This 177-nucleotide RNA was probed chemically with DMS and 2A3. The reactions ran in a buffer of 150 mM KOAc, 10 mM MgCl2 and 150 mM bicine (pH 8.5), at 24 C. Source: RMDB library OK2TST, as collected in RNAgym.
RNA sequence: GGGAACGACUCGAGUAGAGUCGAAAAAAACAGAUGGAAGUGGUUUCAAUACAACUUUCGACAGUGAUGCUGAUAUGAAUGCAGAAAUACCAUCAUCACACAUGAGUGACUUCCAUUCAGUCGGCGACGGCAGUAUAGGUUUCGACCUAUACUGCCGAAAAGAAACAACAACAACAAC
Reactivity to DMS in 0.01 (KOAc 150mM, MgCl2 10mM, bicine 150mM(pH8.5), 24C), signal-to-noise 2, nucleotides 027 to 126: a020a000a020c070a130g000a040u000g000g000a000a010g040u000g020g010u000u000u010c230a180a090u060a010c100a100a020c010u010u000u010c040g010a090c240a140g000u010g030a050u000g030c060u000g000a010u010a010u000g010a090a060u000g030c300a100g020a080a060a010u000a010c010c020a030u000c000a050u010c110a000c230a090c230a070u010g020a080g000u030g010a080c090u000u000c000c000a000u000u010c010a000g090u000c030g000g020c180g040a150
Reactivity to 2A3 in 0.01 (KOAc 150mM, MgCl2 10mM, bicine 150mM(pH8.5), 24C), signal-to-noise 1, nucleotides 027 to 126: a000a000a000c000a000g130a040u090g030g020a000a020g010u060g040g120u110u190u210c100a130a000u150a010c050a050a070c090u090u030u050c130g050a030c040a010g040u050g040a100u110g000c030u000g000a000u090a080u190g110a130a070u130g050c100a030g060a030a080a000u080a020c000c010a000u040c000a000u020c010a040c000a030c010a100u060g030a020g080u050g040a030c010u020u000c000c000a000u020u000c030a000g020u000c010g070g020c000g030a030